[RMDB]
RNA sequence: GGGAACGACUCGAGUAGAGUCGAAAACGCGGAUACUUCGGUAUCCGCGAAAGAAGCGAAGGCGUACCGAAAUAAAACGGAAAUAAAUCGCAAAACGCCUAAAAAGCCUAGACUUCGGUCUAGGCAACUGUUAUAUGUCGUUCGCGACAUAUAACAGAAAAGAAACAACAACAACAAC
Reactivity to 2A3 in 0.01 (KOAc 150mM, MgCl2 10mM, bicine 150mM(pH8.5), 24C), signal-to-noise 2, nucleotides 027 to 126: c010g030c000g010g030a000u000a010c010u050u100c150g010g010u000a010u030c000c010g020c000g000a010a010a010g020a120a010g000c020g060a010a000g000g000c000g000u000a040c030c000g050a040a160a050u280a020a080a020a030c010g040g050a010a020a060u210a040a130a060u120c010g010c010a000a060a060a070c000g020c000c010u060a100a100a030a020a000g000c010c000u010a000g000a000c010u020u030c290g060g000u000c010u010a000g000g000c000a000a000
Reactivity to DMS in 0.01 (KOAc 150mM, MgCl2 10mM, bicine 150mM(pH8.5), 24C), signal-to-noise 2, nucleotides 027 to 126: c000g090c000g020g040a010u000a000c010u000u000c120g000g000u000a010u000c010c010g000c010g000a020a030a080g020a210a100g020c040g040a150a030g010g000c030g020u000a170c010c000g000a040a140a150u000a060a050a070a120c020g000g000a100a100a180u000a040a040a120u000c040g010c030a060a050a060a010c010g020c000c000u000a030a060a060a140a050g020c000c000u000a000g000a010c000u000u010c180g070g020u000c000u000a020g010g000c000a000a000

An RNA of 177 nucleotides, treated with 2A3 and DMS and read out base by base. The RNA was probed in 150 mM KOAc, 10 mM MgCl2 and 150 mM bicine (pH 8.5) at 24 C. Source: RMDB library M2PK50, as collected in RNAgym.